[RMDB]
RNA sequence: GGGAACGACUCGAGUAGAGUCGAAAAUGGUGGAAUCAAAAUCAAUGGUGGGUUGCCAGGGGCGGCAUCAGAGAUUCCACAAAUAUAUGCCAUAAAUCACAUGCAGAGUCUAUUGGGCAACCUGAAGCUUCAUCAAGUACUUCGGUACUUGAUGAAGAAAAGAAACAACAACAACAAC
Reactivity to DMS in 0.01 (KOAc 150mM, MgCl2 10mM, bicine 150mM(pH8.5), 24C), signal-to-noise 2, nucleotides 027 to 126: u020g030g030u000g000g010a000a000u020c010a150a120a150a100u020c260a070a100u020g000g030u020g000g010g010u000u010g000c010c000a150g000g000g060g010c010g000g000c000a000u000c140a110g010a160g000a030u000u000c000c010a000c010a070a050a050u000a100u000a080u000g010c000c020a040u000a060a040a150u000c060a080c140a020u010g010c010a040g000a130g020u000c010u000a190u000u020g000g010g000c010a000a010c000c010u020g000a060a100g000
Reactivity to 2A3 in 0.01 (KOAc 150mM, MgCl2 10mM, bicine 150mM(pH8.5), 24C), signal-to-noise 2, nucleotides 027 to 126: u140g030g000u010g020g000a010a010u010c040a110a080a000a030u150c110a050a150u130g200g050u160g030g060g050u000u030g000c010c020a040g060g000g040g000c090g000g000c010a000u100c020a040g030a000g010a100u000u000c000c000a000c010a010a030a000u140a000u020a000u050g020c000c000a030u120a100a080a010u100c050a030c010a090u030g010c010a010g030a010g250u030c030u120a300u200u290g060g000g000c010a010a000c010c010u000g080a060a020g040

The record gives the reactivity of an RNA of 177 nucleotides to DMS and 2A3. 2A3 adducts were read by reverse transcription with SuperScript II with manganese. For 2A3, 1,313 sequencing reads were counted. Reactivities are given for positions 27 through 126. The reactions ran in a buffer of 150 mM KOAc, 10 mM MgCl2 and 150 mM bicine (pH 8.5), at 24 C.